[RMDB]
RNA sequence: GGGAACGACUCGAGUAGAGUCGAAAACAGGCUUCAAAACAGUGUGUAUGUUCUGUGCUCUCCUUGUGAGCAGCAGUGCCCAGCCUACUCCAGGCCCGUCAGCAGAAGCUGGCUCACAGAUUGGAGCCUACCGGAGCAAUUUCGAUUGCUCCGGUAGAAAAGAAACAACAACAACAAC
Reactivity to DMS in 0.01 (KOAc 150mM, MgCl2 10mM, bicine 150mM(pH8.5), 24C), signal-to-noise 3, nucleotides 027 to 126: c070a080g000g020c020u020u000c070a090a050a140a100c180a090g020u020g010u020g010u010a090u010g010u000u000c010u000g010u000g000c050u000c040u010c180c060u000u000g020u010g010a010g010c050a030g020c010a050g010u000g000c030c060c100a170g000c020c000u000a090c120u010c150c120a060g000g000c010c020c070g000u020c130a100g010c000a160g010a140a140g000c010u010g010g000c020u000c010a020c010a040g020a200u020u000g000g010a010g020c080
Reactivity to 2A3 in 0.01 (KOAc 150mM, MgCl2 10mM, bicine 150mM(pH8.5), 24C), signal-to-noise 2, nucleotides 027 to 126: c030a000g020g070c010u130u100c110a020a070a100a040c040a070g030u050g000u020g060u200a130u140g070u090u020c010u030g070u050g020c010u030c000u010c050c010u100u070g050u030g020a000g040c000a000g020c010a040g090u040g000c000c010c010a020g020c000c000u080a070c040u000c030c010a020g010g010c000c060c070g110u130c060a020g030c010a000g040a300a030g100c030u030g260g070c000u020c020a020c000a000g060a080u090u180g000g000a000g050c000
Source: RMDB library OK2TRN, as collected in RNAgym. Chemical mapping of a 177-nucleotide RNA with DMS and 2A3. The reactions ran in a buffer of 150 mM KOAc, 10 mM MgCl2 and 150 mM bicine (pH 8.5), at 24 C. For DMS the reverse transcriptase was MarathonRT. For 2A3, 1,545 sequencing reads were counted. 2A3 adducts were read by reverse transcription with SuperScript II with manganese.